[RMDB]
RNA sequence: GGGAACGACUCGAGUAGAGUCGAAAAUUGGCCCAGUGUUCGGUACGGACGCGGGUACCCAAUAGCGGGUGUUCAGCGGCGGCAAUGUCGCCGACUGCGUAGAUGUCGGGAUCGCUGGUGCGCAGCGCGAGCUGAAGUGGUUCGCCACUUCAGCUCGAAAAGAAACAACAACAACAAC
Reactivity to 2A3 in 0.01 (KOAc 150mM, MgCl2 10mM, bicine 150mM(pH8.5), 24C), signal-to-noise 2, nucleotides 027 to 126: u080u070g050g050c010c040c010a020g000u030g030u040u070c040g110g100u140a060c040g040g050a020c010g000c010g090g070g020u050a020c010c000c000a050a080u240a150g050c070g010g010g000u050g060u110u170c080a080g120c020g000g010c000g000g020c000a150a300u300g010u030c000g020c020c010g050a070c000u030g000c000g010u020a030g010a260u150g040u010c030g070g060g050a030u100c050g000c000u020g010g030u170g000c080g000c050a000g010c060g020
Reactivity to DMS in 0.01 (KOAc 150mM, MgCl2 10mM, bicine 150mM(pH8.5), 24C), signal-to-noise 2, nucleotides 027 to 126: u020u020g030g030c040c030c000a070g000u000g000u000u000c030g010g040u010a110c070g000g000a050c010g030c020g010g000g010u020a040c060c000c020a130a120u000a090g010c160g000g010g020u000g000u010u020c080a160g000c000g000g020c010g030g020c030a100a120u000g030u000c000g010c010c000g000a060c010u000g010c050g000u000a050g000a150u000g010u000c030g000g020g000a050u000c030g000c020u000g010g010u010g000c050g060c020a070g000c140g010